An RNA of 177 nucleotides, treated with 2A3 and DMS and read out base by base. For 2A3, 3,571 sequencing reads were counted. The RNA was probed in 150 mM KOAc, 10 mM MgCl2 and 150 mM bicine (pH 8.5) at 24 C. Values cover nucleotides 27 to 126.

RNA sequence: GGGAACGACUCGAGUAGAGUCGAAAAAAAGAUAUGGAAUCAUUGUAGCUGGUGAAUGACUACCCACCUAGCUCGGAAACGAGCUAGAGGUCAUUACCCAGCGCAGAUAAUGAUUCCUAAGUCAAAAGCUGAUGUAAUAGUUCGCUAUUACAUCAGCAAAAGAAACAACAACAACAAC
Reactivity to 2A3 in 0.01 (KOAc 150mM, MgCl2 10mM, bicine 150mM(pH8.5), 24C), signal-to-noise 1, nucleotides 027 to 126: a000a000a000g140a060u200a110u300g000g010a000a010u000c000a020u000u050g000u070a080g020c000u000g000g040u120g100a000a020u000g010a000c010u110a220c010c050c000a020c000c000u010a000g010c000u000c000g000g030a080a090a090c010g000a010g000c000u000a000g000a000g010g020u000c020a000u000u040a210c020c000c020a000g010c000g000c040a000g000a100u120a020a020u030g010a000u010u040c000c000u020a070a030g060u060c040a080a010a000a240
Reactivity to DMS in 0.01 (KOAc 150mM, MgCl2 10mM, bicine 150mM(pH8.5), 24C), signal-to-noise 3, nucleotides 027 to 126: a030a160a030g010a070u000a300u000g020g020a020a000u000c000a010u000u000g040u000a100g010c020u000g010g000u000g000a010a000u000g000a010c000u000a100c000c000c010a300c070c000u000a000g010c000u020c000g030g000a090a090a190c000g010a000g000c000u000a000g000a100g010g000u000c010a000u000u000a050c050c000c020a010g000c020g010c220a060g000a070u010a020a000u000g000a050u000u000c000c010u010a070a060g030u000c050a040a060a150a170